[RMDB]
Structure probing data (2A3 and DMS) for a 177-nucleotide construct.
For DMS the reverse transcriptase was MarathonRT.
It was measured as part of the RMDB library RFM100.
Conditions: 150 mM KOAc, 10 mM MgCl2 and 150 mM bicine (pH 8.5), 24 C.
Reactivities are given for positions 27 through 126.
RNA sequence: GGGAACGACUCGAGUAGAGUCGAAAAGGAAAUCCCGACCGGCGGUAGUAAAGCACAUUUGCUUUAGAGCCCGUGACCCGUGUGCAUAAGCACGCGGUGGAUUCAGUUUAAGCUGAAGCCGACAGUGUUUAGGAGUGAGCUUCGGCUCACUCCUAAAAAAAGAAACAACAACAACAAC
Reactivity to 2A3 in 0.01 (KOAc 150mM, MgCl2 10mM, bicine 150mM(pH8.5), 24C), signal-to-noise 1, nucleotides 027 to 126: g060g000a010a120a020u010c000c000c000g030a040c030c000g000g020c000g000g000u020a000g000u000a040a000a010g070c010a040c050a300u300u240u230g000c000u000u000u000a060g020a000g000c000c000c000g000u010g010a000c000c000c040g010u010g030u010g000c060a100u100a300a080g000c010a030c000g020c010g000g060u060g000g000a000u000u000c000a000g050u000u000u190a000a000g000c000u000g000a000a000g000c000c000g050a000c040a080g140u130g060
Reactivity to DMS in 0.01 (KOAc 150mM, MgCl2 10mM, bicine 150mM(pH8.5), 24C), signal-to-noise 1, nucleotides 027 to 126: g060g000a100a160a160u000c010c000c000g030a070c120c020g000g000c000g000g000u000a000g040u000a000a000a030g000c050a060c300a240u000u080u020g000c000u000u000u000a070g000a030g040c000c000c000g000u050g050a210c130c000c020g030u000g040u000g010c000a140u070a100a010g000c000a000c010g000c000g030g000u030g000g000a000u000u000c000a020g050u000u030u000a020a300g000c030u000g000a000a000g070c000c020g000a110c170a050g000u020g040